Notes
This 177-nucleotide RNA was probed chemically with 2A3 and DMS. DMS adducts were read by reverse transcription with MarathonRT. Conditions: 150 mM KOAc, 10 mM MgCl2 and 150 mM bicine (pH 8.5), 24 C. For DMS, 1,863 sequencing reads were counted. Reactivities are given for positions 27 through 126. The data come from the RNA Mapping Database (RMDB), library TTRDES.
RNA sequence: GGGAACGACUCGAGUAGAGUCGAAAAAAAAAGAUAUGGAACAGAACUACAACGUAACACUUCGUUGAAAGAAACUCGGAAACGAGUUUCUGGAGAAGUGGAUAAGUUGCUGUUCCUAAGUCAAAAACAGUAAUUAACACUUCGGUGUUAAUUACUGAAAAGAAACAACAACAACAAC
Reactivity to 2A3 in 0.01 (KOAc 150mM, MgCl2 10mM, bicine 150mM(pH8.5), 24C), signal-to-noise 1, nucleotides 027 to 126: a020a000a000a020a000g030a010u090a020u100g020g000a000a000c040a010g020a080a000c110u300a060c300a010a010c030g010u030a040a030c000a000c020u010u000c020g300u300u040g030a050a060a010g000a000a010a000c020u000c000g100g010a060a030a050c000g000a010g000u020u000u020c020u000g000g020a040g000a010a010g020u020g000g000a000u000a020a000g000u000u000g000c000u000g010u010u020c000c000u010a020a020g030u020c070a020a070a070a140a000
Reactivity to DMS in 0.01 (KOAc 150mM, MgCl2 10mM, bicine 150mM(pH8.5), 24C), signal-to-noise 2, nucleotides 027 to 126: a040a010a040a130a100g000a020u000a220u000g000g010a040a000c000a000g010a110a040c100u010a300c000a010a000c000g020u000a140a210c000a000c000u000u000c000g000u000u010g010a110a140a000g000a000a000a020c020u000c000g000g010a050a030a060c010g000a010g000u010u000u000c000u000g000g010a050g000a020a010g020u000g000g000a040u010a050a110g010u010u000g000c000u000g000u000u000c000c020u000a010a040g000u010c020a110a040a100a090a120